[RMDB]
RNA sequence: GGGAACGACUCGAGUAGAGUCGAAAAUCUUUGGCUUUCGAGCCAAAGAGUGGGUGCAAUGUCCUUUAAGCACCAAACACGGAAAAACCGUGAAAGCACAAAAAAAUCACAGUUUCGACUGUGAUAACCAUCUCGUUCUAUUCGUAGAACGAGAUGGAAAAGAAACAACAACAACAAC
Reactivity to 2A3 in 0.01 (KOAc 150mM, MgCl2 10mM, bicine 150mM(pH8.5), 24C), signal-to-noise 2, nucleotides 027 to 126: u020c020u000u000u000g000g010c010u060u030u130c240g130a020g000c000c000a000a000a000g000a000g000u080g140g010g030u000g000c020a030a100u140g080u090c020c000u050u080u050a050a010g010c010a000c000c010a020a040a000c000a000c000g000g030a300a100a070a130a070c000c000g010u020g040a150a050a020g120c080a020c060a120a140a010a010a020a000a000u000c000a000c000a010g000u040u070u160c190g090a000c000u000g010u000g000a000u010a010a010
Reactivity to DMS in 0.01 (KOAc 150mM, MgCl2 10mM, bicine 150mM(pH8.5), 24C), signal-to-noise 2, nucleotides 027 to 126: u000c000u000u000u000g000g010c000u000u000u000c190g040a030g030c000c000a000a010a010g010a060g020u030g010g010g010u020g010c020a130a200u020g010u000c000c000u010u020u000a100a300g010c030a020c000c010a030a120a150c020a010c010g000g000a110a130a080a140a140c010c010g030u020g000a050a060a080g010c190a080c130a010a010a010a100a130a080a030u020c000a010c010a000g010u000u000u020c190g010a030c000u000g000u000g000a000u000a010a140